[RMDB]
RNA sequence: GGGAACGACUCGAGUAGAGUCGAAAAUAAAAACAAACAUGCGGACAAUAUUAUUGAGCCUCAUUAUAAUUUGGUUUCCUUUGCAUUGAAAUAUGUGAAAAGUAAUAGGCUUGAUUCGAAGGAUGCCUCACGAUUUACGAUUCGUCGUAAAUCGUGAAAAAGAAACAACAACAACAAC
Reactivity to 2A3 in 0.01 (KOAc 150mM, MgCl2 10mM, bicine 150mM(pH8.5), 24C), signal-to-noise 5, nucleotides 027 to 126: u090a000a050a020a000a010c100a050a060a010c070a080u160g020c070g000g020a010c050a110a070u150a150u300u130a080u050u090g010a060g040c000c000u050c080a010u060u150a060u120a150a200u110u120u070g060g000u020u050u030c000c000u040u060u020g000c020a030u030u060g050a090a070a010u230a040u100g060u040g060a040a040a070a120g050u070a100a070u040a070g080g000c000u000u040g050a040u100u060c030g020a050a000g040g010a010u070g030c000c040
Reactivity to DMS in 0.01 (KOAc 150mM, MgCl2 10mM, bicine 150mM(pH8.5), 24C), signal-to-noise 4, nucleotides 027 to 126: u070a010a040a020a090a040c130a130a130a120c170a060u030g000c110g010g040a210c070a030a060u000a130u020u030a010u010u000g000a140g000c010c010u000c130a010u000u000a020u000a070a090u030u020u020g000g030u010u000u000c010c020u000u010u010g000c060a040u000u010g010a140a070a090u000a030u010g010u020g010a040a050a040a110g020u010a030a040u010a040g010g000c030u000u000g020a030u010u000c120g000a080a070g020g010a200u010g020c000c130
Chemical mapping of a 177-nucleotide RNA with 2A3 and DMS.
For 2A3, 3,459 sequencing reads were counted.
Values cover nucleotides 27 to 126.
The reactions ran in a buffer of 150 mM KOAc, 10 mM MgCl2 and 150 mM bicine (pH 8.5), at 24 C.
The DMS profile rests on 4,993 reads.